[RMDB]
RNA sequence: GGGAACGACUCGAGUAGAGUCGAAAACAGCAAUCCAUUUAUACACAGCGAAGGCACACUUCCCUCACCCCAGCUGCUGUUGCUACUACGCAUGGAGUUCUUCACAACGCGAAAAAUGUUCACAACCCCCUUAGGUCUGUUUCGACAGACCUAAGGGAAAAGAAACAACAACAACAAC
Reactivity to 2A3 in 0.01 (KOAc 150mM, MgCl2 10mM, bicine 150mM(pH8.5), 24C), signal-to-noise 3, nucleotides 027 to 126: c040a000g150c010a030a010u030c000c010a060u020u140u020a170u060a010c120a000c020a020g050c020g130a090a040g050g010c030a010c000a000c090u070u030c000c000c020u000c020a050c000c010c010c010a020g010c020u050g030c020u030g060u100u010g060c000u030a090c020u000a060c040g000c080a060u080g080g020a020g040u050u010c000u030u030c000a020c030a160a080c100g030c050g120a050a050a000a010a030u140g030u030u040c070a060c000a140a130c040c030
Reactivity to DMS in 0.01 (KOAc 150mM, MgCl2 10mM, bicine 150mM(pH8.5), 24C), signal-to-noise 2, nucleotides 027 to 126: c040a010g000c100a110a190u000c070c010a040u000u020u030a160u000a170c060a040c080a050g010c070g000a140a070g000g000c000a050c030a060c140u000u030c000c060c010u000c070a050c000c000c010c020a070g030c070u010g000c000u000g000u020u000g060c030u000a100c000u030a000c010g050c070a040u060g010g030a070g000u050u000c000u010u000c000a070c040a040a070c140g030c020g000a000a010a030a150a080u000g000u030u020c100a120c200a040a280c290c070
The data come from the RNA Mapping Database (RMDB), library OK1LIB. The record gives the reactivity of an RNA of 177 nucleotides to 2A3 and DMS. For DMS, 1,493 sequencing reads were counted. The reactions ran in a buffer of 150 mM KOAc, 10 mM MgCl2 and 150 mM bicine (pH 8.5), at 24 C.